[RMDB]
RNA sequence: GGGAACGACUCGAGUAGAGUCGAAAACGGGGUCGGUGAAAGUCCGAACCGGCGGUUACAGUCCGCGACCCGGUCGCCUCCACCGACCGGUUGACCAGGUGAAAUUCCUGGACCGACGGUUAAAGUCAAAAUCAUCCAACGUUCGCGUUGGAUGAAAGAAACGUUAAGAGUUCGCUCUUAACGUUUCAAAAGAAACAACAACAACAAC
Reactivity to DMS in 0.01 (KOAc 150mM, MgCl2 10mM, bicine 150mM(pH8.5), 24C), signal-to-noise 2, nucleotides 027 to 156: c030g000g040g010g020u000c000g010g000u020g000a110a060a300g010u000c020c000g000a020a100c110c020g030g000c000g030g020u010u000a220c180a080g020u010c010c010g000c000g020a180c300c000c030g000g000u000c000g000c020c000u000c050c060a190c220c020g000a020c000c000g010g020u000u010g000a090c000c000a030g020g020u000g000a060a300a210u000u000c010c000u000g000g010a010c000c000g030a020c060g000g000u010u010a070a120a200g030u030c020a040a080a120a170u010c000a000u000c000c000a020a020c000g020u000u000c300g050c020g050u000u020g000g000a010u000g000a020a110a150
Conditions: 150 mM KOAc, 10 mM MgCl2 and 150 mM bicine (pH 8.5), 24 C. Chemical mapping of a 207-nucleotide RNA with DMS. It was measured as part of the RMDB library M2RFPK. Values are in units of 0.01, from 0 to 300, in steps of 10.